[RMDB]
RNA sequence: GGGAACGACUCGAGUAGAGUCGAAAAAAAGUGCCCGCACCCUGUUUCGAGCCAAAAAAGCAGGAGGGCGAAAGUAGGUUAAGAGACAUCGCAAGACCUUCAAAACGAACUAUGCGAGUAGUUCACAUUACUGACAGUAAUUCGUUACUGUCAGUAAAAAAGAAACAACAACAACAAC
Reactivity to DMS in 0.01 (KOAc 150mM, MgCl2 10mM, bicine 150mM(pH8.5), 24C), signal-to-noise 9, nucleotides 027 to 126: a050a050a100g020u020g010c010c000c000g030c130a150c160c010c010u000g010u010u000u020c070g010a180g020c140c240a010a040a100a090a040a040g010c010a010g000g000a100g010g000g010c020g000a030a050a070g010u010a020g000g000u000u010a050a210g000a080g000a100c180a080u020c060g000c060a090a130g000a040c010c010u000u010c050a060a060a080a070c150g000a020a020c010u000a010u000g010c160g010a100g010u000a020g010u000u000c010a080c140a120
Reactivity to 2A3 in 0.01 (KOAc 150mM, MgCl2 10mM, bicine 150mM(pH8.5), 24C), signal-to-noise 9, nucleotides 027 to 126: a000a000a010g110u060g020c010c000c000g010c030a090c010c000c000u020g030u010u040u060c120g060a100g120c070c050a100a180a040a030a010a000g000c010a000g000g030a060g020g010g000c010g030a060a050a000g050u070a010g020g020u030u040a080a030g050a020g030a100c040a120u100c070g010c070a050a040g020a060c010c000u030u050c070a080a090a020a020c040g000a000a000c000u000a010u050g040c030g020a020g020u010a010g000u000u010c020a030c010a090
An RNA of 177 nucleotides, treated with DMS and 2A3 and read out base by base. The data come from the RNA Mapping Database (RMDB), libraries RFM100 and RFMREP. DMS adducts were read by reverse transcription with MarathonRT.